[RMDB]
The data come from the RNA Mapping Database (RMDB), library OK3TST. An RNA of 207 nucleotides, treated with 2A3 and read out base by base. The 2A3 profile rests on 521 reads. Values are in units of 0.01, from 0 to 300, in steps of 10. 2A3 adducts were read by reverse transcription with SuperScript II with manganese.
RNA sequence: GGGAACGACUCGAGUAGAGUCGAAAACCAUGGUGUAAAUACUCCCACCGUGGCCAAUUGUAAGCUACCAAUGCAAUGUCAGUGAACAAGGAGUCAGGAAGAGAUACACAGUAGCACACCAUUAUAAACAUUUCCACUUCACAGAUACAAUGGAUGACACGGGCUGAUUAUUCGUAAUCAGCCCGUGAAAAGAAACAACAACAACAAC
Reactivity to 2A3 in 0.01 (KOAc 150mM, MgCl2 10mM, bicine 150mM(pH8.5), 24C), signal-to-noise 2, nucleotides 027 to 156: c000c000a000u050g000g040u010g050u080a110a180a160u170a170c110u110c000c020c000a120c050c030g090u030g010g060c080c090a060a050u080u150g070u100a030a070g000c030u020a080c030c030a010a100u210g050c050a080a060u060g030u060c040a050g010u030g170a020a000c010a010a030g040g000a010g060u030c010a010g000g050a050a040g040a040g010a030u080a100c150a000c000a070g020u030a000g000c050a010c010a000c010c040a030u040u110a090u180a130a080a010c040a010u130u050u040c030c000a000c040u100u030c050a010c030a200g020a000u000a090c050a100a010u040g100g000a040u140g000a010